[RMDB]
RNA sequence: GGGAACGACUCGAGUAGAGUCGAAAAGAUAUGGACCUCAGUAUGGAGCCUGCGUGUCGGAAACGACACCAGGCGUUGAAAUACUAGGUCCUAAGUCAAAAGCAUUCGGCCUUCGGGCCGAAUGCAACUCUUACAUCAGGUUCGCCUGAUGUAAGAGAAAAGAAACAACAACAACAAC
Reactivity to DMS in 0.01 (KOAc 150mM, MgCl2 10mM, bicine 150mM(pH8.5), 24C), signal-to-noise 2, nucleotides 027 to 126: g010a020u010a090u000g000g000a010c010c000u010c300a000g010u000a000u010g020g020a080g030c000c000u000g020c300g030u000g020u000c000g010g010a030a010a040c000g000a020c010a010c000c010a000g000g010c000g010u020u000g010a130a300a000u010a000c000u000a000g000g020u000c000c000u000a000a040g000u000c000a140a130a170a170g000c000a010u000u000c000g020g020c000c020u000u030c230g030g020g020c000c020g010a010a000u000g020c000a020a050
Reactivity to 2A3 in 0.01 (KOAc 150mM, MgCl2 10mM, bicine 150mM(pH8.5), 24C), signal-to-noise 1, nucleotides 027 to 126: g000a000u020a000u060g000g000a000c010c030u050c250a030g000u020a010u030g110g260a080g040c010c020u100g050c130g060u000g010u010c000g010g000a050a020a010c000g000a010c000a000c000c010a020g020g020c010g000u020u060g000a000a020a000u000a010c000u000a000g040g000u000c000c000u000a000a010g000u020c010a020a020a020a270g050c000a010u000u000c000g020g010c000c040u080u260c300g110g030g010c060c010g000a000a000u010g000c030a000a010

This 177-nucleotide RNA was probed chemically with DMS and 2A3. For DMS the reverse transcriptase was MarathonRT. High DMS reactivity at an A or C suggests that its Watson-Crick edge is free. It was measured as part of the RMDB library TTRDES. Conditions: 150 mM KOAc, 10 mM MgCl2 and 150 mM bicine (pH 8.5), 24 C.